Overview:
The record gives the reactivity of an RNA of 207 nucleotides to DMS and 2A3. Conditions: 150 mM KOAc, 10 mM MgCl2 and 150 mM bicine (pH 8.5), 24 C.

[RMDB]
RNA sequence: GGGAACGACUCGAGUAGAGUCGAAAACGAUCAGUACGUUCGCGUACUGAUCGAAGCUACUGGAGACAGUAGCAAGUCUAAGACCUUGUUAGGCGGAAACAAGGAACAAUGGAGGAAGGCCGGACCUCCAUACUUAGACAACCGCCAACCGGCCAACAUCCUACUAGUAGUUCGCUACUAGUAGGAUAAAAGAAACAACAACAACAAC
Reactivity to DMS in 0.01 (KOAc 150mM, MgCl2 10mM, bicine 150mM(pH8.5), 24C), signal-to-noise 2, nucleotides 027 to 156: c020g010a000u010c010a000g020u000a010c020g010u000u010c300g030c000g040u010a030c000u000g000a000u000c000g000a060a070g000c000u010a010c000u000g010g040a300g000a300c010a030g040u000a000g010c000a010a040g010u020c010u010a030a040g000a300c000c010u000u000g000u000u010a120g010g030c110g060g010a280a030a020c010a030a000g010g000a090a130c110a150a110u020g030g010a080g000g020a090a060g010g010c000c000g000g030a300c000c000u010c000c000a010u010a020c070u000u000a060g000a090c030a150a130c070c060g040c100c070a080a070c000c010g000g010c010c010a110a150c180
Reactivity to 2A3 in 0.01 (KOAc 150mM, MgCl2 10mM, bicine 150mM(pH8.5), 24C), signal-to-noise 7, nucleotides 027 to 156: c010g000a000u000c000a000g000u000a000c010g020u020u100c250g010c000g110u000a000c000u000g000a000u000c000g000a000a000g000c000u000a000c000u000g000g020a050g020a050c000a000g000u000a000g000c000a000a010g000u000c000u000a020a030g010a150c000c000u010u020g010u030u040a150g060g110c080g070g070a040a010a000c000a010a000g010g040a050a080c080a100a060u040g010g010a000g030g010a090a250g020g000c020c030g070g000a220c000c010u000c000c010a010u020a020c000u000u000a000g010a020c030a050a070c110c050g080c070c010a020a010c010c000g000g000c000c000a000a010c020